[RMDB]
RNA sequence: GGGAACGACUCGAGUAGAGUCGAAAAUCUAGGGUUCCGCAUGUCAAUUGAUAUGGACUGGUCCGAGAGAAAACACAUACGCGUAAAUAGAAGCGCGUAUGCACACGGAGGGAAAAAAGCCCGGGAGAAUGGGAUUAUUAGUUCGCUAAUAAUCCAACCAUCUUAGACGGUUCGCCGUCUAAGAUGGAAAAGAAACAACAACAACAAC
Reactivity to 2A3 in 0.01 (KOAc 150mM, MgCl2 10mM, bicine 150mM(pH8.5), 24C), signal-to-noise 2, nucleotides 027 to 156: u000c000u000a000g000g010g010u000u000c010c000g010c000a000u030g000u010c030a150a300u230u300g010a010u000a010u020g020g010a100c040u070g030g000u000c000c020g000a000g000a000g000a000a040a010a000c020a010c000a010u000a000c000g020c000g040u070a060a270a050u240a280g290a300a050g020c000g000c010g000u000a000u000g010c020a000c000a000c030g010g020a010g000g000g000a030a130a000a170a170a030g030c010c020c000g010g160g000a040g020a040a110u190g100g000g000a000u000u000a000u000u000a000g000u010u040c150g010c130u000a000a000u000a000a000u000c000c000a000a020
Conditions: 150 mM KOAc, 10 mM MgCl2 and 150 mM bicine (pH 8.5), 24 C. This 207-nucleotide RNA was probed chemically with 2A3. The 2A3 profile rests on 774 reads. It was measured as part of the RMDB library M2RFPK.